Source: RMDB library OK2TST, as collected in RNAgym.
Chemical mapping of a 177-nucleotide RNA with DMS and 2A3.
The 2A3 profile rests on 1,390 reads.
Reactivities are given for positions 27 through 126.

[RMDB]
RNA sequence: GGGAACGACUCGAGUAGAGUCGAAAACUGACAAGCACUCGCAUGUUCCUGAGGAUUCGGGAAACGAACACAACGGAAUGCGACUCGAAGAUCAUAGGAACCGCCGUCAAGAACAACAUGGCUGUGCCAAAUUCGACCCUUUCGAGGGUCGAAUUUGAAAAGAAACAACAACAACAAC
Reactivity to DMS in 0.01 (KOAc 150mM, MgCl2 10mM, bicine 150mM(pH8.5), 24C), signal-to-noise 2, nucleotides 027 to 126: c080u010g000a040c160a120a130g010c030a050c050u030c150g020c100a090u000g000u000u000c000c000u000g030a290g040g000a220u010u000c000g000g010g000a010a120a110c070g010a040a100c120a110c140a090a140c210g010g000a070a060u000g030c010g030a240c020u000c080g000a050a020g010a090u000c070a030u000a060g000g000a030a070c040c220g000c050c080g000u010c070a060a070g010a110a070c090a050a080c160a060u000g000g040c030u000g040u000g010c050
Reactivity to 2A3 in 0.01 (KOAc 150mM, MgCl2 10mM, bicine 150mM(pH8.5), 24C), signal-to-noise 2, nucleotides 027 to 126: c010u020g050a030c020a020a070g030c010a030c000u000c060g080c070a050u100g070u050u000c000c000u020g000a070g000g080a100u020u020c010g070g030g050a090a210a100c000g050a070a020c030a010c010a200a140c020g040g080a090a020u100g020c010g030a020c010u010c030g040a020a010g020a150u060c010a050u120a060g060g000a020a000c030c050g000c000c000g040u030c030a050a030g060a140a050c040a060a010c020a080u100g010g000c020u030g060u040g040c030